Record summary: Chemical mapping of a 177-nucleotide RNA with 2A3. It was measured as part of the RMDB library OK1LIB. For 2A3 the reverse transcriptase was SuperScript II with manganese. Reactivities are given for positions 27 through 126. The reactions ran in a buffer of 150 mM KOAc, 10 mM MgCl2 and 150 mM bicine (pH 8.5), at 24 C.
RNA sequence: GGGAACGACUCGAGUAGAGUCGAAAACUGGUCGGUAUGGGCUCCAUUGUGCUGGAUGGCGCGAUAAUAGAAGAUGACGUAAUGAUUGGCGCGGGAAGCCUGGUGCCGCAGCACAAACGGCUGGAAAGACCGAGUGACUGUUCGCAGUCACUCGGUCAAAAGAAACAACAACAACAAC
Reactivity to 2A3 in 0.01 (KOAc 150mM, MgCl2 10mM, bicine 150mM(pH8.5), 24C), signal-to-noise 1, nucleotides 027 to 126: c000u070g000g030u060c110g050g020u000a030u020g240g030g000c000u000c000c000a030u000u080g040u000g010c020u000g020g160a150u050g020g000c030g000c020g000a110u150a280a010u150a160g120a150a000g040a240u150g120a050c040g000u160a030a030u230g230a090u000u240g000g000c050g000c000g000g090g000a040a000g000c000c010u060g000g000u000g000c000c000g010c010a080g020c070a080c010a020a230a000c020g000g000c010u020g000g000a040a040a040